[RMDB]
RNA sequence: GGGAACGACUCGAGUAGAGUCGAAAACUCAAUGUAGGGAAUAACAUUGAAUUGAUACAAAUACCUUUUUCGGUAUAGGGAAAAACACCGAAUUGAUACAAAUACCUUUCUCAAUGUAGGGAAUAACAAAACAGGCAUCGCUUCGGCGAUGCCUGAACCGAGGACUAUUGUUCGCAAUAGUCCUCGGAAAAGAAACAACAACAACAAC
Reactivity to 2A3 in 0.01 (KOAc 150mM, MgCl2 10mM, bicine 150mM(pH8.5), 24C), signal-to-noise 1, nucleotides 027 to 156: c010u020c010a000a020u090g010u070a090g000g080g120a130a110u120a080a000c000a010u000u000g030a120a140u070u110g070a120u160a180c040a030a090a070u150a040c000c020u020u110u000u000u000c000g000g000u070a060u070a160g010g000g050a130a150a000a000a000c050a030c020c010g020a000a020u020u050g060a030u030a130c040a000a080a000u180a140c000c010u040u090u000c020u000c000a060a050u120g010u030a020g040g030g020a030a030u100a050a080c140a000a040a060a000c010a000g000g000c000a000u010c000g060c070u070u170c140g060g000c010g000a000u000g000c040c000u000g000a000a020